[RMDB]
RNA sequence: GGGAACGACUCGAGUAGAGUCGAAAAGUAGAGGAAAGAUCUAUAUAACACAAUAUAUGUUAUUGUGUUUUCUGAUAACAAUUAUCGUGAUUGUCUAAUCUCCUCAUAUUGUUUAUUCAAGUAGAAAGAUCAUUUCUGAUUUCGAUCAGAAGUGAUCAAAAGAAACAACAACAACAAC
Reactivity to 2A3 in 0.01 (KOAc 150mM, MgCl2 10mM, bicine 150mM(pH8.5), 24C), signal-to-noise 2, nucleotides 027 to 126: g060u080a000g000a000g000g000a100a080a020g020a010u010c050u030a070u000a030u050a140a000c000a020c010a010a000u020a000u040a080u300g300u300u000a000u020u020g010u000g000u040u010u030u000c030u010g000a050u020a110a000c070a150a290u200u020a070u170c060g010u050g060a100u010u060g050u030c060u020a000a080u030c080u050c030c010u020c020a010u070a050u080u070g010u030u070u010a090u070u120c050a090a070g060u030a030g230a090a020a020